[RMDB]
RNA sequence: GGGAACGACUCGAGUAGAGUCGAAAAGCGGUUCUCUUCGGAGAACCGCAAAAAGAUAUGGAGCCACUGCCCAGACAUGCUGGGAUAUCGGAAACGAUAUCACAGCAACAGCUGGGUUGGCUCCUAAGUCAAAAAGCUACUCUUUCGAGAGUAGCAAGCCCUUUAAAGUAUUCGUACUUUAAAGGGCAAAAGAAACAACAACAACAAC
Reactivity to 2A3 in 0.01 (KOAc 150mM, MgCl2 10mM, bicine 150mM(pH8.5), 24C), signal-to-noise 1, nucleotides 027 to 156: g000c000g030g010u000u020c030u020c000u000u120c240g040g040a000g000a000a000c000c000g000c020a000a020a000a000a000g010a000u020a000u020g000g000a000g000c000c010a100c190u170g020c000c050c000a000g000a110c110a150u300g000c000u000g000g000g000a000u000a000u000c000g030g000a000a000a000c000g000a000u000a000u000c000a000c010a010g070c050a050a100c040a030g100c010u000g000g000g000u010u000g000g000c000u010c000c000u000a000a000g000u010c010a030a030a000a140a000g130c000u260a000c000u000c000u000u060u110c150g100a010g020a000g020u010a000g020c010a000a010
An RNA of 207 nucleotides, treated with 2A3 and read out base by base. The 2A3 profile rests on 1,196 reads. Conditions: 150 mM KOAc, 10 mM MgCl2 and 150 mM bicine (pH 8.5), 24 C. The data come from the RNA Mapping Database (RMDB), library RNAMAK.